[RMDB]
RNA sequence: GGGAACGACUCGAGUAGAGUCGAAAACUACUCUGAUACUUCGACCGGCUUCGGCUGUAAUGGCUGGAGUCUGGAGCUCGAUAAAGUCGGCGGAAGUUUGUCGUAACAGCGUGGCAACACGGCUGACAAGCUUUACCCAAUUCGUUGGGUAAAGCUUAAAAGAAACAACAACAACAAC
Reactivity to 2A3 in 0.01 (KOAc 150mM, MgCl2 10mM, bicine 150mM(pH8.5), 24C), signal-to-noise 4, nucleotides 027 to 126: c020u060a030c000u000c020u080g030a030u060a140c060u010u020c010g040a070c010c000g000g000c000u000u000c000g030g000c000u010g110u280a160a130u300g020g000c000u010g000g020a000g000u000c000u000g000g010a020g030c050u040c010g020a020u060a070a100a030g030u010c000g010g030c020g050g030a060a040g010u030u050u090g120u130c100g000u010a080a000c010a010g010c000g000u010g020g000c010a050a000c010a030c010g050g050c020u010g010a020c010
Reactivity to DMS in 0.01 (KOAc 150mM, MgCl2 10mM, bicine 150mM(pH8.5), 24C), signal-to-noise 5, nucleotides 027 to 126: c010u000a090c030u000c010u010g000a040u000a050c110u000u000c010g010a080c010c000g010g000c000u000u000c010g000g030c000u010g010u010a100a090u100g000g010c000u000g000g000a010g000u000c010u020g020g010a120g000c140u010c010g010a040u010a070a130a090g000u000c000g000g000c100g000g000a080a070g000u010u000u020g000u010c050g000u000a070a130c020a030g000c010g010u000g000g000c280a110a160c000a010c010g000g000c010u010g000a080c100